[RMDB]
RNA sequence: GGGAACGACUCGAGUAGAGUCGAAAACAAGGCCAACUCAGACCCCGAGGCUGAUGUCCUGGCCGGGCGCCUGCUCCACCGCCUUAAGGCCGAGUCAGUUACACACACAGUAGCCGAAUAUCUGGAGGUCUUCUCUGACAAAUUCUACGAUGAGGAAAGGAGGAACAAUAUUCGUAUUGUUCCUCCUAAAAGAAACAACAACAACAAC
Reactivity to 2A3 in 0.01 (KOAc 150mM, MgCl2 10mM, bicine 150mM(pH8.5), 24C), signal-to-noise 3, nucleotides 027 to 156: c040a030a050g000g020c000c000a050a010c080u060c070a060g020a200c000c010c010c030g040a070g020g020c020u010g010a040u060g060u080c060c090u030g010g000c000c000g000g000g000c020g020c000c020u100g030c010u010c010c010a050c030c010g040c010c000u060u110a150a060g020g000c000c000g000a010g000u020c030a010g000u030u110a050c080a010c010a000c000a000c010a080g030u120a030g080c040c010g040a070a040u140a050u140c050u060g020g030a040g020g000u000c000u070u010c010u000c010u050g030a030c030a020a100a040u100u050c040u120a060c090g110a110u150g020a030g070g060a080a080
Reactivity to DMS in 0.01 (KOAc 150mM, MgCl2 10mM, bicine 150mM(pH8.5), 24C), signal-to-noise 2, nucleotides 027 to 156: c030a060a160g000g040c010c020a050a090c020u030c060a100g010a070c000c000c030c070g010a140g020g030c000u010g030a060u010g000u000c010c050u030g020g040c000c010g010g030g030c030g010c040c020u000g000c090u000c030c020a120c090c020g050c030c010u000u000a080a140g020g010c010c000g020a130g000u000c010a060g000u010u010a040c060a140c090a140c140a300c060a130g040u000a060g030c040c030g010a090a130u000a070u010c030u000g020g010a110g000g070u000c010u000u000c040u000c020u030g000a100c050a030a060a090u010u000c020u000a030c030g000a130u000g010a050g010g020a110a160

Notes:
Conditions: 150 mM KOAc, 10 mM MgCl2 and 150 mM bicine (pH 8.5), 24 C. Chemical mapping of a 207-nucleotide RNA with 2A3 and DMS. The 2A3 profile rests on 1,877 reads. Reactivities are given for positions 27 through 156. The data come from the RNA Mapping Database (RMDB), library OK3TST.